[RMDB]
RNA sequence: GGGAACGACUCGAGUAGAGUCGAAAAGGAGGAUGCCUUGGCAAAGCACUUUACUUUUUGAAGUGUCCUGCGCGCCCACGACAGCCCUUGAAAAUCCUGGCUAGAGAUUUAUUCGCACCCUCGUUCGAUGGACAUAGUCAUUCGUGACUAUGUCCAUAAAAGAAACAACAACAACAAC
Reactivity to 2A3 in 0.01 (KOAc 150mM, MgCl2 10mM, bicine 150mM(pH8.5), 24C), signal-to-noise 7, nucleotides 027 to 126: g060g010a020g040g020a070u070g000c020c000u040u040g030g040c050a020a020a090g020c010a010c010u040u070u110a160c030u090u150u110u070u220g090a070a020g010u010g050u100c020c020u020g010c040g010c010g010c000c010c000a010c010g060a000c030a010g050c000c010c000u050u070g050a080a040a010a050u040c010c010u010g040g000c010u060a020g010a000g000a090u040u120u100a080u070u060c030g030c020a050c000c000c000u040c030g020u060u070c030g020
Reactivity to DMS in 0.01 (KOAc 150mM, MgCl2 10mM, bicine 150mM(pH8.5), 24C), signal-to-noise 5, nucleotides 027 to 126: g010g000a060g010g010a090u010g010c030c020u010u000g010g010c070a120a150a130g000c020a010c020u000u000u010a080c190u000u010u010u030u010g000a040a040g000u020g000u010c060c050u000g010c080g010c080g010c030c020c040a070c100g000a070c110a090g010c030c010c040u020u000g000a070a080a050a060u010c030c010u000g010g010c050u000a070g010a130g000a090u010u010u020a110u030u020c060g000c080a080c040c010c010u010c040g000u010u010c080g000

Chemical mapping of a 177-nucleotide RNA with 2A3 and DMS. The RNA was probed in 150 mM KOAc, 10 mM MgCl2 and 150 mM bicine (pH 8.5) at 24 C. It was measured as part of the RMDB libraries RFM100 and RFMREP. 2A3 adducts were read by reverse transcription with SuperScript II with manganese.